[RMDB]
RNA sequence: GGGAACGACUCGAGUAGAGUCGAAAAGAUAUGGACGUUUGAGACGCGUCCCAUAUCGGAAACGAUAUGAACCGAACUACGUCAAGAUGAGACGUCCUAAGUCAAAACUACCGCUUCGGCGGUAGAAUCCUUACAACACCUUCGGGUGUUGUAAGGAAAAAGAAACAACAACAACAAC
Reactivity to 2A3 in 0.01 (KOAc 150mM, MgCl2 10mM, bicine 150mM(pH8.5), 24C), signal-to-noise 2, nucleotides 027 to 126: g000a020u050a030u110g010g000a030c030g000u000u010u170g210a140g000a000c020g050c060g100u140c000c000c010a000u010a000u020c000g030g030a030a040a000c020g000a000u010a000u080g030a020a000c070c080g120a180a100c080u120a070c100g010u010c030a050a070g130a300u300g100a020g000a130c020g000u030c010c010u070a090a020g040u040c010a010a000a100a170c020u020a000c010c020g040c060u050u040c300g240g000c000g000g000u000a000g020a010a000
Reactivity to DMS in 0.01 (KOAc 150mM, MgCl2 10mM, bicine 150mM(pH8.5), 24C), signal-to-noise 2, nucleotides 027 to 126: g010a040u000a180u010g010g000a010c000g000u000u010u020g000a300g010a100c060g020c300g000u000c060c060c010a000u000a000u010c000g010g000a050a080a130c010g000a000u000a000u010g000a090a060c140c210g010a030a040c080u010a060c010g000u000c000a140a140g020a240u000g000a140g020a020c000g000u000c000c000u010a020a090g010u030c040a080a070a100a150c010u020a010c000c000g010c010u000u010c200g070g010c020g010g020u000a000g000a020a150